Overview: Source: RMDB library M2PK90, as collected in RNAgym. An RNA of 177 nucleotides, treated with DMS and 2A3 and read out base by base. DMS (dimethyl sulfate) methylates the pairing face of unpaired adenines and cytosines. DMS adducts were read by reverse transcription with MarathonRT. For 2A3 the reverse transcriptase was SuperScript II with manganese. The reactions ran in a buffer of 150 mM KOAc, 10 mM MgCl2 and 150 mM bicine (pH 8.5), at 24 C.
[RMDB]
RNA sequence: GGGAACGACUCGAGUAGAGUCGAAAAGUUAUGGAAAACGUCUUAGCUACCACUACUACAACAAUGCUGGACGGUGAUGGUUCGACUUACUCGAAACCAUCACGUAGUGGUAGUCGUUCCCAUUCAAGGAAGUACGUAACUUCGGUUACGUACUUCCAAAAGAAACAACAACAACAAC
Reactivity to DMS in 0.01 (KOAc 150mM, MgCl2 10mM, bicine 150mM(pH8.5), 24C), signal-to-noise 2, nucleotides 027 to 126: g020u020u020a130u020g000g000a080a090a100a090c050g000u000c030u000u030a150g000c020u000a070c040c010a020c020u030a050c020u020a100c230a100a080c150a090a040u000g000c030u000g010g000a030c040g000g000u000g000a020u000g010g000u000u000c000g000a030c290u020u030a070c140u010c000g000a020a100a010c010c000a000u000c000a030c020g000u000a010g000u000g030g010u010a030g020u000c020g020u000u000c000c060c000a140u000u000c130a050a190
Reactivity to 2A3 in 0.01 (KOAc 150mM, MgCl2 10mM, bicine 150mM(pH8.5), 24C), signal-to-noise 3, nucleotides 027 to 126: g050u040u040a090u270g120g030a100a120a000a010c000g020u020c040u140u160a050g000c000u020a010c000c040a040c050u060a020c020u040a040c040a120a020c040a150a200u140g020c070u080g060g030a020c030g030g010u000g010a010u020g000g020u000u000c000g000a020c050u110u140a060c040u030c010g010a080a050a040c010c000a000u010c020a000c040g000u040a010g020u000g000g010u010a000g000u010c010g000u000u040c010c000c000a020u050u080c030a050a020

Source information
Values cover nucleotides 27 to 126.